[RMDB]
RNA sequence: GGGAACGACUCGAGUAGAGUCGAAAAAUUAGUGCAGACGCAUUGCACUGUUUGGCCCAUCCGUACGCCGCUUCUCCCCUCUCCUCACGGUUGGGGGCUGGAGUGGUGGGGGGCGUGCGUGAAAUUGAAAACGAUCUGGGUUCGCCCAGAUCGUUUUAAAAGAAACAACAACAACAAC
Reactivity to 2A3 in 0.01 (KOAc 150mM, MgCl2 10mM, bicine 150mM(pH8.5), 24C), signal-to-noise 1, nucleotides 027 to 126: a010u240u230a000g010u000g000c000a000g070a180c200g040c300a240u170u000g000c000a000c000u000g020u020u020u060g020g050c000c040c000a000u000c000c000g010u020a020c000g000c000c000g230c220u140u070c030u060c000c060c000c000u000c100u090c040c000u030c000a110c060g260g050u200u030g040g010g000g000g000c000u110g030g020a030g000u060g000g000u060g000g000g000g000g000g000c030g000u020g000c030g000u240g010a000a090a060u080u150g050
Reactivity to DMS in 0.01 (KOAc 150mM, MgCl2 10mM, bicine 150mM(pH8.5), 24C), signal-to-noise 2, nucleotides 027 to 126: a020u010u040a020g020u020g000c020a000g040a110c300g010c220a100u040u000g040c010a010c000u000g010u010u020u000g010g000c000c000c000a160u050c110c050g020u000a020c000g010c010c000g030c030u050u050c000u000c010c000c000c000u000c050u000c020c000u020c110a220c300g000g030u000u000g000g000g010g030g030c200u000g000g000a040g000u000g000g020u030g000g000g000g010g000g000c060g010u020g030c000g010u000g040a020a070a140u050u020g030

Structure probing data (2A3 and DMS) for a 177-nucleotide construct. The RNA was probed in 150 mM KOAc, 10 mM MgCl2 and 150 mM bicine (pH 8.5) at 24 C. As a SHAPE reagent, 2A3 marks flexible, mostly unpaired nucleotides at the ribose 2'-OH. For 2A3 the reverse transcriptase was SuperScript II with manganese.